RNA sequence: GGGAACGACUCGAGUAGAGUCGAAAAGUUCGCGUCGAAGGAUCGAUCUGUUUUCGAUCAUAUAUCAGUUUCGGUAUAGCAAUCAUCAAAGAUCGCAUUUGACAGUUAUGUCAAAGGGACACACCCUUAAAUGCAAGUAAUUCGUUACUUGCAUUUAAAAAGAAACAACAACAACAAC
Reactivity to DMS in 0.01 (KOAc 150mM, MgCl2 10mM, bicine 150mM(pH8.5), 24C), signal-to-noise 9, nucleotides 027 to 126: g010u010u000c040g010c130g020u000c030g010a110a100g000g000a050u010c020g000a020u010c100u010g010u010u010u010u010c090g010a020u000c060a160u000a030u010a020u000c040a130g020u010u010u010c100g010g010u000a020u000a040g010c200a090a030u000c040a050u010c150a070a100a060g000a020u000c020g020c140a160u000u000u000g000a010c000a050g010u020u030a070u000g020u000c020a010a020a040g000g000g010a050c060a070c170a120c010c010c020u000
Reactivity to 2A3 in 0.01 (KOAc 150mM, MgCl2 10mM, bicine 150mM(pH8.5), 24C), signal-to-noise 9, nucleotides 027 to 126: g030u050u050c050g000c040g090u040c020g050a080a040g130g010a060u040c020g000a020u010c070u110g170u080u100u050u110c060g010a020u020c060a010u040a010u010a010u050c050a070g060u030u110u170c060g010g000u030a010u030a060g050c080a080a050u030c010a010u020c040a110a080a040g030a020u060c030g010c070a080u020u010u010g010a010c020a030g060u260u200a140u140g020u030c010a030a010a020g040g020g010a010c020a000c000a050c050c000c000u000
Structure probing data (DMS and 2A3) for a 177-nucleotide construct. The reactions ran in a buffer of 150 mM KOAc, 10 mM MgCl2 and 150 mM bicine (pH 8.5), at 24 C.